[RMDB]
RNA sequence: GGGAACGACUCGAGUAGAGUCGAAAAGGCUGAUGCCGGAGCCGAUACCGGAAUACGAGACCUGAUGUGCGGUCGAAUGCACUGAAGUACGAAAGUACGAAGAGGUCAAACCGAGGACCGAGACUCGAUAUGCUCGUUAGAUGGAGCUUUACAUCAAGGGUAUAUCAUCAUUCGUGAUGAUAUACCCAAAAGAAACAACAACAACAAC
Reactivity to DMS in 0.01 (KOAc 150mM, MgCl2 10mM, bicine 150mM(pH8.5), 24C), signal-to-noise 2, nucleotides 027 to 156: g010g010c000u010g020a030u000g000c040c030g030g000a080g020c000c070g030a210u000a080c020c000g000g000a110a060u000a090c050g040a140g000a120c020c050u000g040a070u000g010u000g020c030g020g020u000c170g010a110a080u010g030c050a030c000u020g010a120a230g040u010a030c010g000a220a100a190g020u000a000c020g010a070a100g000a110g000g000u000c040a070a060a060c040c000g000a150g010g010a050c070c060g000a170g000a120c010u000c030g000a100u000a130u000g040c020u010c040g000u000u000a050g000a180u010g030g000a080g000c020u000u000u010a050c070a030u010c070a080a240
Reactivity to 2A3 in 0.01 (KOAc 150mM, MgCl2 10mM, bicine 150mM(pH8.5), 24C), signal-to-noise 3, nucleotides 027 to 156: g020g000c040u060g040a090u130g060c010c000g000g000a010g000c020c100g040a030u120a100c060c020g030g010a080a070u160a120c090g030a040g060a140c010c000u030g050a030u070g090u010g020c030g000g040u120c070g060a050a070u120g010c010a010c030u060g000a070a010g000u000a000c010g040a130a010a050g000u000a010c020g010a030a040g090a020g010g030u030c000a040a000a040c040c020g010a010g000g000a010c010c050g040a020g010a060c040u030c060g020a050u030a050u210g000c010u030c000g080u100u130a050g000a080u090g070g040a010g030c060u150u090u060a100c040a030u060c060a020a170